Chemical mapping of a 177-nucleotide RNA with 2A3 and DMS. The RNA was probed in 150 mM KOAc, 10 mM MgCl2 and 150 mM bicine (pH 8.5) at 24 C. Reactivities are given for positions 27 through 126. 2A3 adducts were read by reverse transcription with SuperScript II with manganese.
RNA sequence: GGGAACGACUCGAGUAGAGUCGAAAAGAUAUGGACCCAAGUAGGGAGCUUUAUAUCGGAAACGAUAUUAAGCGACGAUCUACUUGGGUCCUAAGUCAAAACGUCACAUCGUUCGCGAUGUGACGAACGUUAACAUGUCGUUCGCGACAUGUUAACGAAAAGAAACAACAACAACAAC
Reactivity to 2A3 in 0.01 (KOAc 150mM, MgCl2 10mM, bicine 150mM(pH8.5), 24C), signal-to-noise 1, nucleotides 027 to 126: g010a000u030a010u050g000g000a000c000c000c020a000a000g010u010a010g080g200g150a170g050c010u040u020u000a000u000a010u000c010g000g000a030a020a000c000g000a000u000a000u010u120a020a000g010c020g020a070c130g080a300u000c000u000a010c000u000u000g020g010g000u000c000c000u000a000a000g000u010c020a000a000a000a040c010g000u000c000a000c010a000u000c000g040u030u040c230g010c020g130a030u010g010u000g000a010c010g000a020a000
Reactivity to DMS in 0.01 (KOAc 150mM, MgCl2 10mM, bicine 150mM(pH8.5), 24C), signal-to-noise 2, nucleotides 027 to 126: g030a030u000a230u020g010g000a010c000c000c000a020a020g000u000a000g020g000g010a130g020c000u000u000u000a000u000a000u000c000g010g000a040a040a160c000g030a020u000a000u000u010a000a020g030c000g030a120c300g010a040u000c000u000a010c000u000u010g000g010g000u000c000c010u000a000a050g020u020c030a110a040a110a150c030g020u000c010a000c010a010u000c000g010u000u010c250g040c000g010a030u000g020u000g000a010c000g020a020a040